RNA sequence: GGGAACGACUCGAGUAGAGUCGAAAAGGCAAAAGCUGUCUAUAUAUAGGCAGGAAAGCGGAAACAUGACAAGGGUGCAGUCUAUCAUAGGAGAGUAGAUGCAGCAAUGCAGGUGAAAGCCUUAACGCAGAGCUAAUAACUUCGGUUAUUAGCUCUGAAAAGAAACAACAACAACAAC
Reactivity to DMS in 0.01 (KOAc 150mM, MgCl2 10mM, bicine 150mM(pH8.5), 24C), signal-to-noise 2, nucleotides 027 to 126: g000g030c040a040a120a050a060g010c000u000g010u000c020u000a050u000a150u000a100u010a020g010g000c010a010g000g000a010a070a110g000c030g010g010a110a100a060c050a080u020g000a130c070a050a090g010g000g030u020g010c000a050g040u010c040u000a070u010c060a100u000a080g000g000a090g000a060g010u010a040g010a130u000g010c030a050g000c090a030a080u010g020c090a050g000g000u000g000a070a090a160g000c010c020u000u000a080a130c220g010
Reactivity to 2A3 in 0.01 (KOAc 150mM, MgCl2 10mM, bicine 150mM(pH8.5), 24C), signal-to-noise 1, nucleotides 027 to 126: g060g000c020a060a040a040a020g050c010u010g010u010c000u020a040u000a020u000a010u040a270g020g000c020a000g020g050a050a020a000g020c010g020g000a100a100a020c060a060u110g050a030c010a030a080g070g000g020u040g000c010a020g050u000c060u060a030u100c020a040u090a080g000g170a050g000a020g040u050a010g010a030u060g000c000a010g010c030a040a110u110g000c020a010g000g050u040g090a030a020a010g020c010c040u060u070a100a000c100g000
The data come from the RNA Mapping Database (RMDB), library RFMREP. Structure probing data (DMS and 2A3) for a 177-nucleotide construct. For DMS, 1,477 sequencing reads were counted. For 2A3, 995 sequencing reads were counted. For 2A3 the reverse transcriptase was SuperScript II with manganese. The RNA was probed in 150 mM KOAc, 10 mM MgCl2 and 150 mM bicine (pH 8.5) at 24 C.